RNA sequence: GGGAACGACUCGAGUAGAGUCGAAAACUAGCGAAGGGUGAUGAGUACAUUUCAAACUUUAUAGCAUCUGCAAUCAAGGCCACGCAAUCACUGCCUGGUAUGAGUGAUUUUGGUGCUGAUGUGCUGAAGGAGCAGGAGAACAUCGUAAAAAGUUCUCUACUACCGGACUAUUCGUAGUCCGGUAGUAAAAAGAAACAACAACAACAAC
Reactivity to DMS in 0.01 (KOAc 150mM, MgCl2 10mM, bicine 150mM(pH8.5), 24C), signal-to-noise 2, nucleotides 027 to 156: c100u000a090g020c050g020a130a080g020g000g040u000g020a120u010g020a080g000u010a080c030a090u010u000u000c060a100a060a090c060u000u010u000a070u030a140g000c020a030u000c030u020g000c040a060a100u000c070a030a030g000g020c040c020a040c070g030c060a080a060u000c110a100c090u000g000c030c080u010g010g030u010a090u000g010a040g020u000g020a060u000u000u000u000g000g050u030g010c010u000g010a060u000g030u000g030c070u000g000a050a060g010g000a080g010c060a120g000g010a030g010a030a040c040a090u010c130g000u000a060a070a050a090a070g010u000u000c000u000c000
Reactivity to 2A3 in 0.01 (KOAc 150mM, MgCl2 10mM, bicine 150mM(pH8.5), 24C), signal-to-noise 4, nucleotides 027 to 156: c010u010a010g020c030g060a040a030g010g010g010u030g020a080u060g030a060g040u060a060c040a110u060u080u130c090a100a140a060c080u100u140u120a160u080a070g010c020a060u020c050u080g040c060a040a050u030c030a080a050g040g000c030c020a020c040g040c020a030a040u100c030a020c100u070g020c040c030u040g020g000u100a100u170g050a040g080u020g020a020u010u030u070u060g050g020u020g010c000u000g000a030u050g030u040g000c020u030g020a040a030g010g030a000g030c040a010g000g040a000g000a010a010c000a030u080c070g060u160a020a030a000a050a060g020u010u010c010u000c000

Conditions: 150 mM KOAc, 10 mM MgCl2 and 150 mM bicine (pH 8.5), 24 C. This 207-nucleotide RNA was probed chemically with DMS and 2A3. For DMS the reverse transcriptase was MarathonRT. Values cover nucleotides 27 to 156.